[RMDB]
This 207-nucleotide RNA was probed chemically with 2A3.
Values cover nucleotides 27 to 156.
The reactions ran in a buffer of 150 mM KOAc, 10 mM MgCl2 and 150 mM bicine (pH 8.5), at 24 C.
For 2A3 the reverse transcriptase was SuperScript II with manganese.
It was measured as part of the RMDB library OK3TST.

RNA sequence: GGGAACGACUCGAGUAGAGUCGAAAAUGAGGAAUUGGCUGGGAAGGCGCGGGUCUAAUUACAGGCCCAUGAGGGUCCCUCUCGCCCCCACCCAGGAAGCAGCGGAGAUCCUGGCACACUCAGCACCUGGGCCUGUGCCUGCCCAGCUGCUGGUGGAGAGUAAACACGAAUUCGUUCGUGUUUACUCAAAAGAAACAACAACAACAAC
Reactivity to 2A3 in 0.01 (KOAc 150mM, MgCl2 10mM, bicine 150mM(pH8.5), 24C), signal-to-noise 1, nucleotides 027 to 156: u220g010a050g080g030a040a090u270u090g030g000c040u080g050g000g020a060a030g000g020c010g000c030g030g000g000u060c050u100a090a150u200u190a200c050a070g000g020c070c030c030a030u090g030a090g010g010g020u050c080c010c000u060c050u050c020g040c000c000c040c000c000a040c000c040c000a000g020g020a160a010g010c030a010g020c050g010g020a060g010a060u080c000c000u050g030g000c050a020c000a000c110u150c050a040g020c060a040c000c040u000g000g000g000c000c010u020g020u030g030c000c010u010g010c000c000c000a000g010c000u000g000c000u000g040g020u060g000g080a110